[RMDB]
RNA sequence: GGGAACGACUCGAGUAGAGUCGAAAAUUCAAUCAUUAUGUCAACAGAGUGACGUGGUCAGUCUUCAUGCCGCAGUUGCACCAGGUUCACGCAAUAUGAUUGGUCCGGCAGAGUUCGCGGCAAUGCCUGGUGAUGGAUACUUCGUCAACACGGCACGUGUUGUCCCGAUGUUCGCAUCGGGACAACAAAAAGAAACAACAACAACAAC
Reactivity to 2A3 in 0.01 (KOAc 150mM, MgCl2 10mM, bicine 150mM(pH8.5), 24C), signal-to-noise 3, nucleotides 027 to 156: u080u030c020a000a020u020c010a050u020u150a050u130g090u140c110a100a080c040a180g140a050g150u050g020a000c090g030u030g020g020u070c050a020g020u000c040u090u100c070a060u090g000c010c000g010c030a030g010u040u020g020c050a020c000c010a000g070g000u130u110c050a060c090g020c010a060a020u040a020u120g090a090u040u060g010g000u010c000c000g050g070c090a050g010a070g170u210u170c070g020c000g000g000c030a020a020u050g000c000c000u000g010g040u000g020a040u030g080g010a050u070a240c050u100u140c060g020u010c000a010a030c000a020c060g000g000c000a010c120g030
Reactivity to DMS in 0.01 (KOAc 150mM, MgCl2 10mM, bicine 150mM(pH8.5), 24C), signal-to-noise 2, nucleotides 027 to 156: u000u000c030a070a090u000c060a080u010u000a130u010g000u000c060a090a290c080a150g000a120g040u000g000a030c020g050u000g010g010u000c060a180g020u000c050u010u000c040a070u020g020c000c000g010c040a140g000u010u010g020c040a110c030c030a040g030g000u010u000c050a040c040g030c070a110a110u000a070u000g010a060u000u000g010g010u000c060c000g030g000c040a050g050a160g050u010u000c050g000c040g010g040c040a060a080u000g000c020c000u000g040g020u000g000a040u000g030g030a160u000a080c200u000u030c010g000u000c000a000a000c020a050c070g030g000c000a040c090g030
Chemical mapping of a 207-nucleotide RNA with 2A3 and DMS. The 2A3 profile rests on 1,746 reads. The reactions ran in a buffer of 150 mM KOAc, 10 mM MgCl2 and 150 mM bicine (pH 8.5), at 24 C. For DMS the reverse transcriptase was MarathonRT. Values are in units of 0.01, from 0 to 300, in steps of 10.